[RMDB]
RNA sequence: GGGAACGACUCGAGUAGAGUCGAAAACGGAUGGAGCCCAAACCGAAGGUAUUCCUUCGGGGUUGUAGGACCACGUCAUAUUCGACCAUACUGGAUAGUAGAACAGCCUGGAAAGGCUGGCCGGAGACGUAGAAGAAUCCUUCGGGAUUCUUCUACGAAAAGAAACAACAACAACAAC
Reactivity to 2A3 in 0.01 (KOAc 150mM, MgCl2 10mM, bicine 150mM(pH8.5), 24C), signal-to-noise 5, nucleotides 027 to 126: c050g060g020a110u070g030g030a070g040c000c000c010a020a000a010c000c000g010a000a010g040g000u220a250u270u300c000c000u000u000c000g000g000g020g020u040u060g030u070a040g000g030a010c000c010a010c050g020u010c040a010u030a160u130u020c020g010a000c010c000a020u010a040c000u070g070g010a030u010a040g060u020a020g050a160a010c010a000g000c010c020u060g000g090a100a050a020g000g010c010u000g000g030c000c010g080g000a100g020a030
Reactivity to DMS in 0.01 (KOAc 150mM, MgCl2 10mM, bicine 150mM(pH8.5), 24C), signal-to-noise 2, nucleotides 027 to 126: c130g000g000a060u000g020g010a160g000c020c000c020a000a050a060c000c000g010a020a000g000g000u030a180u040u090c010c000u000u000c010g000g020g000g000u060u000g000u030a050g000g010a070c010c030a050c050g010u000c050a120u010a280u020u020c040g000a040c010c120a130u000a040c020u000g000g000a030u020a120g000u010a030g000a100a170c010a000g000c010c010u000g010g090a130a110a020g000g020c000u000g000g010c010c020g000g010a090g010a230